[RMDB]
Structure probing data (2A3 and DMS) for a 177-nucleotide construct. Conditions: 150 mM KOAc, 10 mM MgCl2 and 150 mM bicine (pH 8.5), 24 C. The 2A3 profile rests on 4,208 reads. The DMS profile rests on 1,876 reads. The data come from the RNA Mapping Database (RMDB), library TTRDES.
RNA sequence: GGGAACGACUCGAGUAGAGUCGAAAAGAUAUGGACAUCUACUUCUACGAAGAACUAGCUCGGAAACGAGCUAGGGAGUAGUGUAGAGUGUCCUAAGUCAAAAGCUCGCGUGUUCGCACGCGAGCAAGAUAUUUCAUCAGUUCGCUGAUGAAAUAUCAAAAGAAACAACAACAACAAC
Reactivity to 2A3 in 0.01 (KOAc 150mM, MgCl2 10mM, bicine 150mM(pH8.5), 24C), signal-to-noise 3, nucleotides 027 to 126: g020a030u070a050u150g010g020a010c010a070u030c000u030a010c010u300u300c020u030a070c070g300a300a080g000a070a020c010u010a000g000c000u000c000g050g030a080a090a030c000g020a000g000c000u010a000g020g000g010a030g000u140a010g000u000g000u060a070g090a110g300u300g010u000c000c000u010a070a020g030u040c010a010a100a160a140g000c010u000c010g020c000g000u050g040u130u230c300g020c170a000c000g040c000g010a000g000c010a010a000
Reactivity to DMS in 0.01 (KOAc 150mM, MgCl2 10mM, bicine 150mM(pH8.5), 24C), signal-to-noise 2, nucleotides 027 to 126: g000a040u010a300u010g000g010a000c010a100u000c000u000a020c010u000u000c000u010a020c020g000a150a200g040a190a210c000u000a000g000c000u000c000g010g000a060a090a190c010g020a010g010c010u000a000g020g000g000a140g050u000a000g040u000g020u000a030g000a130g010u040g000u000c000c010u000a010a100g010u010c040a110a100a130a140g010c000u000c000g000c000g020u010g000u000u000c210g020c010a010c000g020c000g000a000g030c010a010a010